Record summary: This 177-nucleotide RNA was probed chemically with DMS and 2A3. The RNA was probed in 150 mM KOAc, 10 mM MgCl2 and 150 mM bicine (pH 8.5) at 24 C. Reactivities are given for positions 27 through 126. For DMS, 1,266 sequencing reads were counted. High DMS reactivity at an A or C suggests that its Watson-Crick edge is free. DMS adducts were read by reverse transcription with MarathonRT.
[RMDB]
RNA sequence: GGGAACGACUCGAGUAGAGUCGAAAAACAACUUCAACUGAAACACCAUUGGCAACACACUGAUCUUGUAUGGUGUCAAUUGUCUCACAUAACUGAUUAGGUGCCUUUGCUUUCACAUUAUGCAAAGGACUCUCUGUACCUUCGGGUACAGAGAGUCAAAAGAAACAACAACAACAAC
Reactivity to DMS in 0.01 (KOAc 150mM, MgCl2 10mM, bicine 150mM(pH8.5), 24C), signal-to-noise 1, nucleotides 027 to 126: a030c080a190a160c080u030u020c100a000a000c110u000g000a140a030a010c050a070c200c100a070u000u000g000g000c000a000a000c100a000c110a050c060u020g000a100u010c230u000u000g000u000a020u000g010g000u000g060u010c000a100a050u010u000g050u000c100u000c000a010c010a030u000a110a110c140u000g000a050u000u000a000g000g000u000g000c030c000u000u000u000g000c050u000u000u000c100a120c240a090u000u000a110u000g030c030a030a040a030g020
Reactivity to 2A3 in 0.01 (KOAc 150mM, MgCl2 10mM, bicine 150mM(pH8.5), 24C), signal-to-noise 4, nucleotides 027 to 126: a010c080a050a120c020u130u120c060a160a120c050u120g170a140a060a060c040a010c010c000a010u000u060g000g000c000a010a020c040a000c020a010c090u160g040a230u130c110u140u130g040u130a050u100g060g000u030g000u040c010a010a030u030u060g000u010c030u010c040a070c000a170u200a190a090c070u070g120a170u090u160a050g040g000u010g050c010c030u000u030u000g000c010u020u100u180c050a060c010a200u140u300a060u250g040c000a020a020a010g010